[RMDB]
RNA sequence: GGGAACGACUCGAGUAGAGUCGAAAAUAGAUGGAAUGAGACUGAGUGGAGCUCCUAAGGUUAUUUACAAACACUUGGAUAUGGAGGACCUUAAGAAGAAGUUAGAGGAGAACAAGGACAAGAAGAAAAGUGUUAGUUACUUCGGUAACUAACACUUAAAAGAAACAACAACAACAAC
Reactivity to DMS in 0.01 (KOAc 150mM, MgCl2 10mM, bicine 150mM(pH8.5), 24C), signal-to-noise 3, nucleotides 027 to 126: u010a100g010a160u030g000g030a090a040u000g020a130g010a080c050u000g010a090g040u010g020g000a100g020c080u000c030c020u000a050a040g020g020u000u000a110u010u000u000a090c100a090a070a070c100a060c080u000u000g000g010a090u020a110u000g010g000a050g000g000a030c030c040u000u010a050a090g010a020a060g010a070a070g000u010u000a040g000a060g000g010a080g010a010a050c120a040a080g000g010a070c130a040a070g010a090a120g010a070a070
Reactivity to 2A3 in 0.01 (KOAc 150mM, MgCl2 10mM, bicine 150mM(pH8.5), 24C), signal-to-noise 1, nucleotides 027 to 126: u130a000g080a020u090g060g000a090a040u100g010a060g020a020c020u030g030a030g030u090g010g030a070g060c010u010c040c000u010a010a020g030g020u050u010a050u080u210u150a090c050a120a060a000c050a000c080u050u060g050g020a090u050a050u240g040g020a010g010g000a020c040c000u010u010a060a020g040a000a030g050a030a010g020u050u090a020g050a020g060g000a010g000a030a030c030a010a000g140g020a020c000a000a000g150a030a000g120a010a200

Source: RMDB library OK2TST, as collected in RNAgym. Chemical mapping of a 177-nucleotide RNA with DMS and 2A3. The DMS profile rests on 1,671 reads. The 2A3 profile rests on 844 reads. Values are in units of 0.01, from 0 to 300, in steps of 10. The reactions ran in a buffer of 150 mM KOAc, 10 mM MgCl2 and 150 mM bicine (pH 8.5), at 24 C.